The record gives the reactivity of an RNA of 207 nucleotides to 2A3 and DMS. The data come from the RNA Mapping Database (RMDB), library OK3TST. The RNA was probed in 150 mM KOAc, 10 mM MgCl2 and 150 mM bicine (pH 8.5) at 24 C. The 2A3 profile rests on 2,857 reads. Reactivities are given for positions 27 through 156.

RNA sequence: GGGAACGACUCGAGUAGAGUCGAAAAGUGGGAUUACCAUGACCUCAGUGGAUCCAUGCUGGCAAUUUAACUUGCUAAAAAUUUAGCACAUGUGUGUAUCUGCUCUUUUUGGUUUUUAAAUGCAUUAUGUUUUAGCUUCCGUUCAUAUAUUGCCAACCAAGAACAACUCUUUCGAGAGUUGUUCUUGAAAAGAAACAACAACAACAAC
Reactivity to 2A3 in 0.01 (KOAc 150mM, MgCl2 10mM, bicine 150mM(pH8.5), 24C), signal-to-noise 5, nucleotides 027 to 156: g080u080g010g050g050a160u060u130a120c010c010a020u070g080a110c010c030u080c060a030g010u010g010g020a010u000c040c010a050u080g030c050u040g020g000c010a020a020u060u090u100a110a070c020u020u060g020c010u060a040a040a050a100a180u140u210u150a050g000c030a030c030a070u130g070u020g020u010g020u120a080u050c050u050g000c020u060c070u100u100u040u070u100g080g010u080u050u030u060u210a080a120a030u080g040c020a020u040u060a070u230g080u030u060u010u040a020g010c000u060u010c040c020g020u030u070c040a030u080a010u010a030u170u050g030c020c020a010a010c040
Reactivity to DMS in 0.01 (KOAc 150mM, MgCl2 10mM, bicine 150mM(pH8.5), 24C), signal-to-noise 2, nucleotides 027 to 156: g010u000g010g020g000a160u000u000a070c030c060a110u000g010a250c070c010u000c060a160g020u000g030g010a140u010c050c020a060u010g040c030u010g030g000c030a050a080u010u010u000a060a070c050u000u010g000c030u000a010a030a100a100a190u010u000u010a080g000c060a060c100a070u000g020u000g010u000g020u020a040u000c040u000g010c020u000c020u010u000u000u010u000g020g010u000u000u000u000u000a010a060a110u020g020c030a070u000u000a090u000g020u000u000u000u010a040g010c040u000u000c030c020g010u000u020c060a080u000a090u000a080u010u000g010c000c010a030a120c080